Notes:
Structure probing data (DMS and 2A3) for a 207-nucleotide construct. 2A3 adducts were read by reverse transcription with SuperScript II with manganese. The DMS profile rests on 3,712 reads.
RNA sequence: GGGAACGACUCGAGUAGAGUCGAAAAACCAAGUCUGGGGGCCGAUGAGGGUUGGCUCAAAGUAGGGUUUUGACUUGAAAACUCAAGCUGUGGCCCCAAAACGAUGGAGGUAAAUGAGAAUCCUCCUAAAACUAUGGACACUUCGGUGUCCAUAGAACAUUCCAUGUAUCUUCGGAUACAUGGAAUGAAAAGAAACAACAACAACAAC
Reactivity to DMS in 0.01 (KOAc 150mM, MgCl2 10mM, bicine 150mM(pH8.5), 24C), signal-to-noise 2, nucleotides 027 to 156: a100c010c000a050a150g010u000c020u000g010g020g000g050g050c030c020g080a110u010g000a110g010g010g000u000u020g010g000c040u000c020a060a060a130g000u000a110g010g020g030u000u000u000u010g020a130c040u000u000g000a050a050a040a120c060u010c030a070a100g020c050u020g030u000g010g000c010c010c010c020a010a020a030a040c080g010a130u020g000g010a050g000g030u000a050a070a110u000g010a230g010a230a150u020c000c000u010c000c010u000a030a050a010a130c010u000a000u010g000g020a010c010a000c010u000u020c300g050g000u000g030u000c000c000a000u000a010g000a080a230
Reactivity to 2A3 in 0.01 (KOAc 150mM, MgCl2 10mM, bicine 150mM(pH8.5), 24C), signal-to-noise 3, nucleotides 027 to 156: a000c030c000a050a040g080u020c080u180g030g020g000g010g020c000c000g040a050u070g030a050g040g070g030u030u030g040g060c010u000c010a040a050a050g080u090a070g030g020g020u020u010u030u090g110a120c030u100u130g020a000a000a060a050c010u010c030a020a040g000c020u040g010u090g080g000c030c010c000c010a000a010a000a000c080g050a080u090g000g000a000g020g020u040a130a180a170u180g010a100g050a090a040u060c010c000u000c000c000u020a040a020a000a010c000u000a000u000g000g010a010c000a000c010u020u080c160g150g020u000g000u000c000c000a000u000a000g000a010a010